[RMDB]
RNA sequence: GGGAACGACUCGAGUAGAGUCGAAAACCACCGAAGUUCGCUUCGGUGGAAAAGAUACCGGUCUCGGUAUCAAAGUGAGACCCACAGACCACAGGUAACUGAAAACCGAUCCGUUCGCGGAUCGGAAGCGUAGGAAAAUGUUCGCAUUUUCCUACGCAAAAGAAACAACAACAACAAC
Reactivity to DMS in 0.01 (KOAc 150mM, MgCl2 10mM, bicine 150mM(pH8.5), 24C), signal-to-noise 1, nucleotides 027 to 126: c000c000a000c000c000g000a000a010g000u000u000c230g080c000u000u000c000g000g010u000g010g010a070a050a080a110g000a050u000a040c000c000g010g030u010c200u020c040g000g000u000a000u000c020a010a060a080g010u000g000a160g010a160c010c010c030a140c120a120g000a050c000c070a030c140a070g000g010u040a030a090c090u010g000a100a010a040a160c020c000g000a000u010c000c000g000u000u030c280g040c020g000g010a040u000c000g010g010a000a090
Reactivity to 2A3 in 0.01 (KOAc 150mM, MgCl2 10mM, bicine 150mM(pH8.5), 24C), signal-to-noise 2, nucleotides 027 to 126: c010c000a000c000c000g000a010a000g000u030u090c110g140c110u010u020c000g000g010u010g000g000a010a000a000a060g010a000u010a010c010c020g090g180u160c270u160c220g010g000u030a010u010c000a000a020a020g110u070g040a090g020a010c000c020c010a030c010a030g120a040c000c080a010c050a080g000g050u140a200a080c040u060g050a020a040a030a100c010c010g000a010u000c010c000g000u020u060c260g000c000g100g000a000u000c000g000g000a010a000